[RMDB]
RNA sequence: GGGAACGACUCGAGUAGAGUCGAAAAGGAAAUAAACGGCACCUAUAAGGUGGUGCCGUACCAGCGUGACCUACCAACACGCAACGAGCAGUCUGGUAUGACUGCAAAGGUAUGGUAAACAAAAAAACUAAUAUCCCCUAUUCGUAGGGGAUAUUAGAAAAGAAACAACAACAACAAC
Reactivity to 2A3 in 0.01 (KOAc 150mM, MgCl2 10mM, bicine 150mM(pH8.5), 24C), signal-to-noise 7, nucleotides 027 to 126: g020g020a080a050a030u190a070a220a000c020g010g000c010a000c010c030u100a080u060a300a090g250g040u110g000g000u000g010c000c000g000u000a010c010c000a010g000c000g010u010g030a110c010c020u020a030c030c000a030a020c010a000c010g000c020a020a050c060g020a020g010c000a000g010u010c010u140g130g110u300a120u280g000a000c000u010g000c000a030a040a010g030g000u130a080u170g010g050u070a080a080a030c120a040a080a030a010a000a000a000
Reactivity to DMS in 0.01 (KOAc 150mM, MgCl2 10mM, bicine 150mM(pH8.5), 24C), signal-to-noise 6, nucleotides 027 to 126: g000g000a100a090a100u020a050a110a060c010g000g000c010a010c000c000u000a150u020a140a190g020g020u000g020g030u000g000c000c000g020u000a010c030c020a140g000c020g020u010g010a080c030c030u010a030c010c010a250a060c020a010c010g020c020a140a110c130g010a270g000c000a010g010u000c000u000g030g020u010a080u010g010a020c010u000g000c000a010a030a090g000g010u000a060u010g010g010u010a050a100a060c100a010a000a040a050a050a070a100